[RMDB]
RNA sequence: GGGAACGACUCGAGUAGAGUCGAAAACCUCACUACAUUUUACUGUUCCUAAAGUAUUUGUGACAGGUACAGUAAAACGUAUUGCAAGGUUUAUCAGUUCCUAUAAACAGGUAAAUAACAAUAUAUGAAAAGCAAAGACUGUUCGCAGUCUUUGCAACGUCUAGGUUUUGUUCGCAAAACCUAGACGAAAAGAAACAACAACAACAAC
Reactivity to 2A3 in 0.01 (KOAc 150mM, MgCl2 10mM, bicine 150mM(pH8.5), 24C), signal-to-noise 2, nucleotides 027 to 156: c000c000u010c000a010c000u010a000c000a070u010u010u000u010a010c010u010g000u010u040c000c010u070a180a170a050g070u050a280u220u250u230g140u110g080a070c040a070g000g000u000a000c000a000g000u000a000a000a000a000c010g000u000a000u000u020g030c060a110a050g010g000u000u000u000a100u090c050a030g020u010u030c000c010u030a060u170a050a120a010c060a030g140g010u140a150a100a060u210a150a030c040a140a040u130a000u070a030u300g050a090a140a050a020g000c000a000a000a000g000a000c000u010g010u050u050c090g000c060a000g000u000c000u000u000u000g000c000a000a000